[RMDB]
The record gives the reactivity of an RNA of 177 nucleotides to DMS and 2A3. For DMS the reverse transcriptase was MarathonRT. High 2A3 reactivity points to a flexible backbone, as in loops and unpaired stretches. For 2A3 the reverse transcriptase was SuperScript II with manganese. The RNA was probed in 150 mM KOAc, 10 mM MgCl2 and 150 mM bicine (pH 8.5) at 24 C.
RNA sequence: GGGAACGACUCGAGUAGAGUCGAAAACAGGUCGUUCAGACCACUCGAUACGGAGGCGAGACGUCGCCACAGCAGACCGGACGAGCCCUUCGCUGCGAUCGGGGGCAGUCGACGUGUUGCCGAGAUAGCGUGGGUAGUAGUUCGCUACUACCCACGCAAAAGAAACAACAACAACAAC
Reactivity to DMS in 0.01 (KOAc 150mM, MgCl2 10mM, bicine 150mM(pH8.5), 24C), signal-to-noise 1, nucleotides 027 to 126: c210a230g010g030u000c010g030u000u020c070a190g000a120c020c000a110c090u000c040g020a020u000a080c130g010g010a220g000g000c000g000a010g000a010c030g000u000c030g000c070c150a070c090a080g000c010a040g010a100c000c000g010g040a040c030g000a110g040c040c300c300u010u000c090g010c000u020g000c040g020a110u000c080g000g000g030g030g000c080a010g010u000c010g000a000c010g000u000g000u000u000g000c000c010g010a190g000a080u000a130
Reactivity to 2A3 in 0.01 (KOAc 150mM, MgCl2 10mM, bicine 150mM(pH8.5), 24C), signal-to-noise 1, nucleotides 027 to 126: c040a010g010g030u020c030g060u220u240c070a040g010a030c010c000a060c050u090c040g050a020u060a190c040g000g110a020g000g030c000g010a040g000a000c000g040u030c000g010c020c010a050c000a030g000c000a000g060a180c000c030g040g010a020c000g020a020g000c030c000c000u120u220c120g000c000u300g160c000g030a060u020c020g020g000g040g050g000c010a000g030u000c020g010a000c020g060u140g100u040u000g000c020c000g080a120g020a140u080a050